[RMDB]
RNA sequence: GGGAACGACUCGAGUAGAGUCGAAAAGAUUAUCCGCAUCCAAGUCCCUAAAGUAUGGCAUGCUCCGGCAUGGCAUUACAAUGGGAAAGGUUCAGAGACUAGAUGGGGGUCGGUUCUUUCCGGAUGGGAAGGGUUUAAGGUAUAGUCCGUUACAAACGUACUUACCAUAGUUCGCUAUGGUAAGUACAAAAGAAACAACAACAACAAC
Reactivity to DMS in 0.01 (KOAc 150mM, MgCl2 10mM, bicine 150mM(pH8.5), 24C), signal-to-noise 2, nucleotides 027 to 156: g000a130u010u000a020u000c030c010g020c120a130u000c010c030a070a170g040u010c000c000c010u000a040a140a270g010u000a040u000g010g010c000a030u000g010c010u010c200c300g060g050c000a030u000g000g010c010a010u000u000a030c020a050a300u000g010g030g000a030a070a080g030g000u010u010c040a090g000a140g010a120c050u000a080g000a110u010g030g040g020g050g000u000c050g000g000u000u010c030u000u000u000c030c030g000g040a180u010g010g020g030a130a100g020g010g000u000u000u000a090a100g040g000u000a100u000a110g010u000c010c000g030u010u020a150c090a040a070a140c160
Reactivity to 2A3 in 0.01 (KOAc 150mM, MgCl2 10mM, bicine 150mM(pH8.5), 24C), signal-to-noise 2, nucleotides 027 to 156: g040a000u150u160a040u080c050c030g060c070a020u000c040c030a130a060g100u040c020c010c000u070a050a060a020g010u000a020u010g020g110c010a000u000g000c000u010c050c110g120g000c010a000u000g020g090c000a000u090u160a020c020a010a050u050g010g000g000a010a030a020g020g000u060u010c010a030g070a020g020a090c040u050a010g000a140u090g010g010g000g000g000u020c010g010g010u050u000c020u030u080u000c020c010g050g010a070u130g030g020g040a020a040g030g000g000u020u030u120a060a010g020g020u040a030u030a070g030u040c030c020g020u060u050a050c060a040a110a000c050
Chemical mapping of a 207-nucleotide RNA with DMS and 2A3. Conditions: 150 mM KOAc, 10 mM MgCl2 and 150 mM bicine (pH 8.5), 24 C. The data come from the RNA Mapping Database (RMDB), library ARCHII.